The record gives the reactivity of an RNA of 207 nucleotides to 2A3. Source: RMDB library OK3TST, as collected in RNAgym. Values are in units of 0.01, from 0 to 300, in steps of 10. For 2A3 the reverse transcriptase was SuperScript II with manganese.
RNA sequence: GGGAACGACUCGAGUAGAGUCGAAAACUACCGCAGCUGGUACCUGGCCUACAACUACGGCGACCCCGAGAAGGGCGUGCGCUCCUGGACGCUGCUCACCACCUCGGACGUCACCUGCGGCGUGGAGCAAGUCUACUGGUCGCUGCCCGACAUGAUGCAUUCUGAGUGUCUUCGGACACUCAGAAUGAAAAGAAACAACAACAACAAC
Reactivity to 2A3 in 0.01 (KOAc 150mM, MgCl2 10mM, bicine 150mM(pH8.5), 24C), signal-to-noise 2, nucleotides 027 to 156: c040u060a070c020c050g020c050a010g080c060u090g040g000u080a090c020c030u040g100g000c020c000u040a060c060a180a040c050u100a030c030g020g020c010g030a110c000c000c000c010g030a050g010a090a070g010g000g010c010g070u060g020c010g000c020u090c000c040u050g040g010a020c010g000c080u000g000c010u010c010a130c020c030a050c020c000u020c000g040g030a100c070g080u080c070a090c050c010u050g000c040g000g000c010g010u090g050g040a030g050c010a040a000g050u000c000u050a060c040u030g020g000u030c010g020c070u110g040c000c000c020g020a030c010a110u210g060a040u190g010